[RMDB]
This 207-nucleotide RNA was probed chemically with 2A3 and DMS. Reactivities are rounded to 0.1 and cut off at 0 and 3. For 2A3 the reverse transcriptase was SuperScript II with manganese. The RNA was probed in 150 mM KOAc, 10 mM MgCl2 and 150 mM bicine (pH 8.5) at 24 C.
RNA sequence: GGGAACGACUCGAGUAGAGUCGAAAAAUAUACACGCUAUUCCUUGCCACCUGGUGCAUAGUGAUGAAUUGGAUGAUGACAUGUGCAAUAUUCUUUUCGUCAAUGAGGAAGGUAAAAGCAGUUUUUACGCGAAAGAUUACACGCGCGGAAGCGUUGCCGACAGUGUUACAUUCGUGUAACACUGUCGAAAAGAAACAACAACAACAAC
Reactivity to 2A3 in 0.01 (KOAc 150mM, MgCl2 10mM, bicine 150mM(pH8.5), 24C), signal-to-noise 5, nucleotides 027 to 156: a010u240a010u050a030c050a010c050g020c020u040a070u100u050c000c000u040u060g010c010c010a050c020c030u060g050g030u130g020c030a040u060a090g190u060g030a020u040g000a000a030u010u020g020g020a010u050g020a030u050g030a080c080a130u220g170u200g060c010a060a030u030a030u140u020c000u020u020u000u000c010g010u010c000a010a010u040g020a020g050g000a030a010g000g020u080a050a090a000a000g000c000a010g000u030u010u040u130u130a030c020g000c000g030a130a180a030g050a020u120u220a080c110a020c050g080c010g000c030g030g020a070a000g000c010g030u030u030g060c030
Reactivity to DMS in 0.01 (KOAc 150mM, MgCl2 10mM, bicine 150mM(pH8.5), 24C), signal-to-noise 2, nucleotides 027 to 156: a110u010a130u010a080c070a050c030g000c070u000a110u010u000c020c030u000u000g050c040c040a120c050c020u010g000g010u000g000c030a080u000a040g020u020g030a090u010g000a030a050u000u000g020g020a060u000g010a110u000g000a080c100a180u010g040u020g030c040a110a110u000a050u010u000c020u000u000u000u000c000g030u010c030a060a070u000g000a050g000g000a160a020g030g000u000a050a050a070a090g010c040a050g020u000u000u000u020u010a030c000g020c020g010a060a070a100g020a190u000u000a060c050a130c040g010c010g030c010g000g000a040a040g030c060g000u000u010g000c040